[RMDB]
RNA sequence: GGGAACGACUCGAGUAGAGUCGAAAAUCCUAAGUCGUCAUGUAGAGGCGAAGAACUAGCUGGGAGGAUCUCGGAAACGAGAUCCGAAGAACAGCUAGGGAGCCUUGAGGUGACGAUAUGGAAAAUCUUAUUUUUGCUUUCGAGCAAAAAUAAGAAACUUUAUUGCCUGGUUCGCCAGGCAAUAAAGAAAAGAAACAACAACAACAAC
Reactivity to 2A3 in 0.01 (KOAc 150mM, MgCl2 10mM, bicine 150mM(pH8.5), 24C), signal-to-noise 1, nucleotides 027 to 156: u000c000c000u030a090a000g030u000c000g010u000c010a030u300g010u040a000g000a000g000g010c010g110a300a040g030a040a040c000u000a000g000c000u010g010g000g020a030g010g000a020u010c000u000c000g020g060a070a050a030c000g000a000g000a000u000c000c040g010a030a000g010a000a000c000a000g020c010u000a000g010g000g010a000g000c010c000u030u000g040a070g180g000u020g000a000c000g000a000u010a050u020g040g060a070a160a030a100u020c000u000u000a010u000u000u000u000u010g000c000u080u050u210c250g140a000g000c000a000a000a000a000a000u000a000a000g010a020a000a000